An RNA of 177 nucleotides, treated with DMS and read out base by base.

[RMDB]
RNA sequence: GGGAACGACUCGAGUAGAGUCGAAAACCCAAAUUUGGUAGGGGAACCGUCCUGAAGGAAUCAAACGGAAGGGACGGAUGGUAUCUUCGGAUGCCAUAGAUAGAUGGCUACCGCUCUUGGUGCGAGGCUUAAACCGAAGCUUCGGCUUCGGUUUAAGAAAAGAAACAACAACAACAAC
Reactivity to DMS in 0.01 (KOAc 150mM, MgCl2 10mM, bicine 150mM(pH8.5), 24C), signal-to-noise 1, nucleotides 027 to 126: c000c000c000a140a050a050u030u010u010g020g030u000a040g020g010g000g010a050a240c020c000g040u030c010c000u000g030a300a260g000g000a070a150u010c300a040a120a130c070g000g010a270a120g000g000g000a010c010g000g000a120u010g000g020u000a030u000c020u030u010c080g000g030a010u000g000c040c000a000u000a040g000a130u010a040g010a170u000g000g000c020u000a100c040c040g010c100u000c130u000u000g010g050u000g000c120g090a210g000g000
Source: RMDB library RFMREP, as collected in RNAgym.